[RMDB]
RNA sequence: GGGAACGACUCGAGUAGAGUCGAAAAUUGCCAGCUAUCCUGAAUAUCUUAGUCUCUUUGAUAUCAAAUGAUGUCAAUUUCCAAAUGAUAGUUGAGAUCACAGAUAAAAUGAUUGUGACAAACUCGAUGGGUUACAGUGAUUCGUCACUGUAACCCAAAAAGAAACAACAACAACAAC
Reactivity to DMS in 0.01 (KOAc 150mM, MgCl2 10mM, bicine 150mM(pH8.5), 24C), signal-to-noise 1, nucleotides 027 to 126: u010u000g020c040c000a060g000c010u000a010u000c060c060u000g010a210a080u000a000u000c000u000u000a300g000u000c070u000c000u040u010u010g000a090u000a020u030c000a060a100a160u020g000a060u000g030u000c030a000a110u000u010u000c070c070a000a100a220u010g000a040u000a040g020u000u000g050a010g000a140u000c000a020c180a030g000a140u000a040a010a170a060u010g000a120u000u000g030u010g000a030c050a040a070a070c100u000c090g050a190